Conditions: 150 mM KOAc, 10 mM MgCl2 and 150 mM bicine (pH 8.5), 24 C. Chemical mapping of a 177-nucleotide RNA with DMS and 2A3. 2A3 adducts were read by reverse transcription with SuperScript II with manganese. For 2A3, 5,487 sequencing reads were counted. The DMS profile rests on 9,313 reads.

[RMDB]
RNA sequence: GGGAACGACUCGAGUAGAGUCGAAAAGGUAGGUCCAGGCCCCACAGCGCCGUCAAGCUCAGGCCCGCCGCGCCCAGCCACACGCUCAGGCGGCUGUGACCGUACAGCCCCACCAGCAGCAACGUGCUGGGGUCUAAUUAUUCGUAAUUAGACCCCAAAAAGAAACAACAACAACAAC
Reactivity to DMS in 0.01 (KOAc 150mM, MgCl2 10mM, bicine 150mM(pH8.5), 24C), signal-to-noise 7, nucleotides 027 to 126: g010g010u000a060g020g020u010c030c050a120g000g000c030c030c040c040a090c160a060g020c070g010c050c040g000u000c090a100a100g000c040u000c100a100g010g010c030c020c040g010c050c050g000c100g010c040c010c040a100g000c050c070a060c070a070c130g010c020u000c080a130g000g010c130g010g000c000u000g010u000g000a090c130c130g000u010a060c040a050g000c010c000c010c060a090c080c050a050g010c050a040g000c040a070a070c110g010u000g010c100
Reactivity to 2A3 in 0.01 (KOAc 150mM, MgCl2 10mM, bicine 150mM(pH8.5), 24C), signal-to-noise 2, nucleotides 027 to 126: g040g000u070a010g040g030u030c040c020a040g010g080c020c000c010c000a070c010a020g030c020g000c040c020g070u060c080a070a030g010c010u030c070a040g000g020c000c030c010g040c010c010g040c060g010c000c020c000a020g030c020c000a050c010a010c070g000c010u050c040a060g000g040c040g010g000c050u030g050u030g040a110c050c020g000u060a010c010a000g030c000c010c000c000a030c020c010a010g030c010a010g000c010a040a070c110g040u070g030c040